[RMDB]
RNA sequence: GGGAACGACUCGAGUAGAGUCGAAAAGAAAGAAAGAAAGAACUCUGUAAAGUGAGGGAUUGCCUGGACCAGGUCGACGGGCCUGCUCCAGUUUCCUUCGCUCUGCUCAACGGGCAGACCGCCACAAAAAACGCGUGGCUGUUCGCAGCCACGCGAAGUUAUCAAGAGUGUUCGCACUCUUGAUAACAAAAGAAACAACAACAACAAC
Reactivity to 2A3 in 0.01 (KOAc 150mM, MgCl2 10mM, bicine 150mM(pH8.5), 24C), signal-to-noise 2, nucleotides 027 to 156: g050a020a100a000g040a050a100a000g030a010a100a030g080a060a050c100u120c060u190g040u170a060a130a030g030u010g010a000g010g010g030a040u000u050g050c010c000u000g000g000a000c000c020a000g000g000u010c020g040a120c170g100g010g010c000c000u010g000c000u000c000c000a000g000u000u000u000c000c000u000u010c000g000c000u000c000u000g020c010u010c040a140a130c100g020g040g000c000a020g020a100c030c060g080c020c010a120c070a020a170a050a040a010a000c020g000c020g000u010g020g000c020u010g030u030u050c170g000c080a020g010c040c030a000c000g030c010g010a010a000